This 177-nucleotide RNA was probed chemically with DMS and 2A3. For 2A3, 4,227 sequencing reads were counted. For DMS the reverse transcriptase was MarathonRT. Values cover nucleotides 27 to 126. The DMS profile rests on 4,545 reads.

[RMDB]
RNA sequence: GGGAACGACUCGAGUAGAGUCGAAAAAGUCGUCGGGAGCGUUGAGGCCGGUACCCACCGCGGUGCCGCCGAUCGCCAGCUCGCCCAGCCUGGGCAGACACGCGCGCACCCGCUCGAUGCCGGCCUCGGCCACACAUAAAUUCGUUUAUGUGUGGCCAAAAGAAACAACAACAACAAC
Reactivity to DMS in 0.01 (KOAc 150mM, MgCl2 10mM, bicine 150mM(pH8.5), 24C), signal-to-noise 5, nucleotides 027 to 126: a120g000u000c020g020u000c100g000g010g010a100g020c070g010u010u020g010a030g010g010c020c010g020g000u000a030c040c010c050a130c230c120g010c170g020g010u000g010c000c010g000c010c020g000a300u000c020g010c030c030a050g000c060u010c100g010c050c050c040a160g020c300c070u010g000g010g000c020a050g010a030c080a130c300g000c040g010c180g000c010a020c020c010c020g030c040u000c140g010a080u000g010c010c000g000g010c020c010u000c020
Reactivity to 2A3 in 0.01 (KOAc 150mM, MgCl2 10mM, bicine 150mM(pH8.5), 24C), signal-to-noise 2, nucleotides 027 to 126: a000g110u050c020g000u010c020g030g030g020a060g020c070g050u120u190g010a010g020g000c010c010g020g020u010a030c010c010c020a050c050c050g040c140g000g000u010g000c030c010g000c010c000g000a040u020c000g000c010c000a000g000c010u080c080g090c010c020c000a030g050c030c040u100g030g010g090c030a040g030a020c040a010c030g020c010g040c010g000c000a000c020c060c000g000c010u010c040g040a040u090g000c000c010g000g000c020c010u020c020